RNA sequence: GGGAACGACUCGAGUAGAGUCGAAAAGAUAUGGACCAUGCAGACAUGAGGGAUGUCGGAAACGACAUCUCCUCAACAGCUGUGCAUGGUCCUAAGUCAAACUACUACAACUUCGGUUGUAGUAGAACACGUGAUUCCAGUUCGCUGGAAUCACGUGAAAAGAAACAACAACAACAAC
Reactivity to DMS in 0.01 (KOAc 150mM, MgCl2 10mM, bicine 150mM(pH8.5), 24C), signal-to-noise 1, nucleotides 027 to 126: g020a010u000a020u000g000g000a010c000c000a010u000g040c010a030g000a030c100a110u000g020a040g010g010g000a030u000g020u000c000g000g000a050a010a090c000g020a020c000a000u000c000u020c000c010u000c000a140a160c180a070g070c230u000g000u000g000c020a000u000g000g020u000c000c000u000a010a040g040u000c000a140a180a240c000u000a000c000u000a010c000a000a000c010u010u000c300g050g020u000u000g000u020a000g020u000a000g000a090a150
Reactivity to 2A3 in 0.01 (KOAc 150mM, MgCl2 10mM, bicine 150mM(pH8.5), 24C), signal-to-noise 1, nucleotides 027 to 126: g000a010u000a020u030g000g000a010c010c000a000u040g000c020a000g120a300c060a270u300g020a010g000g000g000a000u020g000u020c000g000g000a030a010a010c000g010a000c000a010u000c010u100c020c000u010c000a050a020c040a030g030c110u030g000u050g070c000a020u000g020g040u000c000c010u000a000a000g020u000c000a060a100a050c010u010a000c000u010a000c000a010a010c000u070u090c290g200g000u010u000g000u000a000g000u000a020g010a010a020

Source information
Chemical mapping of a 177-nucleotide RNA with DMS and 2A3. Values cover nucleotides 27 to 126. The RNA was probed in 150 mM KOAc, 10 mM MgCl2 and 150 mM bicine (pH 8.5) at 24 C. DMS adducts were read by reverse transcription with MarathonRT.